An RNA of 207 nucleotides, treated with 2A3 and DMS and read out base by base. DMS adducts were read by reverse transcription with MarathonRT. The 2A3 profile rests on 994 reads. For 2A3 the reverse transcriptase was SuperScript II with manganese. The reactions ran in a buffer of 150 mM KOAc, 10 mM MgCl2 and 150 mM bicine (pH 8.5), at 24 C.

RNA sequence: GGGAACGACUCGAGUAGAGUCGAAAACCGACUUUUCGAAGUCGGGAGGGGGGGUCCCUCGAAGAACGAAUAAAGAUCGAGGAUCCUGAAGCCUCCACGGGGGAGAUCUGUUCGGGAGAGGGACGGAGGCACCCGUCCACCAUCCUUCGGGAUGGAAGAAAGAGAAAGGUUUCGACCUUUCUCUUUCAAAAGAAACAACAACAACAAC
Reactivity to 2A3 in 0.01 (KOAc 150mM, MgCl2 10mM, bicine 150mM(pH8.5), 24C), signal-to-noise 1, nucleotides 027 to 156: c000c000g000a000c040u090u070u060u120c120g160a080a010g030u010c000g000g070g000a150g000g020g070g000g020g010g010u000c000c000c000u020c000g080a140a020g000a020a010c010g020a000a010u120a120a300a000g010a010u000c000g000a180g020g010a020u010c000c010u020g010a060a080g040c010c010u000c000c030a040c030g040g000g010g000g010a000g000a000u000c000u020g070u020u020c000g010g020g000a030g000a010g010g000g000a010c010g010g010a040g050g030c020a000c000c000c030g110u120c090c030a000c030c000a000u010c000c010u020u110c180g150g000g000a000u010g000g000a000a050
Reactivity to DMS in 0.01 (KOAc 150mM, MgCl2 10mM, bicine 150mM(pH8.5), 24C), signal-to-noise 1, nucleotides 027 to 156: c010c020g000a010c000u000u000u010u000c080g010a040a050g020u000c000g040g050g010a050g000g070g050g090g020g000g000u000c020c000c010u000c000g010a190a150g010a100a300c020g030a120a040u000a050a130a020g010a030u000c020g000a180g030g010a030u000c010c060u000g000a050a150g000c000c000u030c000c010a300c020g000g010g020g000g040a030g000a040u000c040u000g010u000u000c000g000g010g000a150g000a060g030g000g020a020c000g010g010a040g020g040c040a050c010c000c000g020u010c000c040a300c000c000a000u010c000c000u010u010c300g050g010g010a010u010g010g010a070a110